[RMDB]
RNA sequence: GGGAACGACUCGAGUAGAGUCGAAAAGACGGAAAAUAUCAGUAUCACAACAACAAACUAGGAACACGGCUACAACAACAACGAUACUGAUAGACGUCAAGCCGUGAAAACUAGAAACAACAAGAAAGGGUAGUGUAACUUUCGAGUUACACUACCCAAAAGAAACAACAACAACAAC
Reactivity to 2A3 in 0.01 (KOAc 150mM, MgCl2 10mM, bicine 150mM(pH8.5), 24C), signal-to-noise 1, nucleotides 027 to 126: g000a010c040g000g120a070a130a060a070u110a000u000c000a000g050u000a000u000c020a020c090a300a050c000a020a000c010a040a300a000c000u000a000g020g030a080a000c000a000c040g000g050c010u000a000c180a040a000c000a070a120c000a070a000c110g000a000u000a000c000u000g080a000u000a000g000a000c000g000u000c030a000a000g000c000c000g000u030g000a000a020a000a000c030u040a000g020a000a160a000c180a040a040c000a010a020g000a190a200a000
Reactivity to DMS in 0.01 (KOAc 150mM, MgCl2 10mM, bicine 150mM(pH8.5), 24C), signal-to-noise 1, nucleotides 027 to 126: g000a100c000g000g000a040a010a010a000u000a000u000c000a020g010u000a000u000c000a150c300a020a300c300a100a030c250a230a180a040c030u000a000g000g000a000a200c140a000c130g000g080c000u000a000c230a160a020c140a060a020c230a170a140c230g000a020u000a000c000u000g000a000u000a000g000a000c040g010u000c000a140a000g000c000c000g000u000g000a040a000a020a000c000u000a000g020a140a110a060c250a240a050c070a000a040g060a180a110a000
Structure probing data (2A3 and DMS) for a 177-nucleotide construct.
The data come from the RNA Mapping Database (RMDB), library OK1LIB.
The reactions ran in a buffer of 150 mM KOAc, 10 mM MgCl2 and 150 mM bicine (pH 8.5), at 24 C.